Structure probing data (2A3 and DMS) for a 177-nucleotide construct. The RNA was probed in 150 mM KOAc, 10 mM MgCl2 and 150 mM bicine (pH 8.5) at 24 C. For DMS the reverse transcriptase was MarathonRT.
RNA sequence: GGGAACGACUCGAGUAGAGUCGAAAAAACUGCGGAGCAUGGUGACCGGUACACAAUGAUAAUCUCAUCACAGCAACAGGUCGAUCUUCUGUGUAGACCUGAACAUGAAAAUCCUAAAACUCUGAACAUGUGAGAUUAGUUUCGACUAAUCUCACAUAAAAGAAACAACAACAACAAC
Reactivity to 2A3 in 0.01 (KOAc 150mM, MgCl2 10mM, bicine 150mM(pH8.5), 24C), signal-to-noise 6, nucleotides 027 to 126: a000a000c060u080g010c030g020g000a040g020c030a050u050g000g040u020g030a110c000c040g030g020u090a020c050a010c020a060a120u110g030a040u070a090a050u030c030u020c040a060u040c020a040c020a080g060c030a030a100c000a010g000g020u000c020g070a150u020c040u220u040c080u240g120u040g030u100a010g000a000c000c000u000g000a000a000c000a020u070g040a060a040a020a090u040c010c010u070a080a060a030a040c090u060c020u030g050a040a040c050
Reactivity to DMS in 0.01 (KOAc 150mM, MgCl2 10mM, bicine 150mM(pH8.5), 24C), signal-to-noise 5, nucleotides 027 to 126: a060a060c060u000g010c080g020g000a050g000c080a050u010g010g020u010g000a070c050c070g010g010u000a060c110a060c100a100a060u000g010a070u010a070a040u000c130u000c030a060u000c050a060c130a060g000c140a100a130c040a010g010g000u000c010g010a060u030c070u010u010c160u020g000u020g010u020a160g000a020c010c000u000g010a050a050c120a050u000g000a060a060a080a080u010c010c050u010a040a070a100a110c170u000c020u000g010a070a130c240